[RMDB]
RNA sequence: GGGAACGACUCGAGUAGAGUCGAAAACAGCGGCUCAUCAGUGGGCUUAGCCCAGACUUUUGAGAGAGUAAUGACCUCUCAGCCCCUCCACCUUGGGGUGCCCUAUUCGGAGCACUGCAGUUCCCGAUCAAUCCAUAGACUUCGGUCUAUGGAUUGAAAAAGAAACAACAACAACAAC
Reactivity to 2A3 in 0.01 (KOAc 150mM, MgCl2 10mM, bicine 150mM(pH8.5), 24C), signal-to-noise 1, nucleotides 027 to 126: c000a010g010c180g080g010c000u000c020a180u040c040a210g180u050g010g000g050c010u090u070a050g050c000c130c000a220g080a260c040u010u070u170u070g010a020g000a020g000a000g010u020a040a080u110g050a040c000c000u020c000u000c000a070g070c020c010c020c000u020c030c050a140c030c020u040u140g010g000g000g000u030g010c000c020c000u050a090u010u120c060g120g020a010g000c010a000c040u000g000c000a050g010u020u040c000c000c000g000a050
Reactivity to DMS in 0.01 (KOAc 150mM, MgCl2 10mM, bicine 150mM(pH8.5), 24C), signal-to-noise 2, nucleotides 027 to 126: c040a070g020c040g010g010c010u000c000a060u000c200a150g010u020g000g000g000c020u000u030a120g010c000c010c080a090g040a070c150u000u040u000u000g000a020g020a000g010a010g000u000a120a090u000g000a230c210c000u010c000u000c010a060g010c050c010c000c000u000c100c070a100c170c090u030u000g020g020g000g000u010g000c000c010c000u000a120u030u020c200g010g000a040g030c000a110c010u010g000c050a090g000u000u000c000c010c010g000a060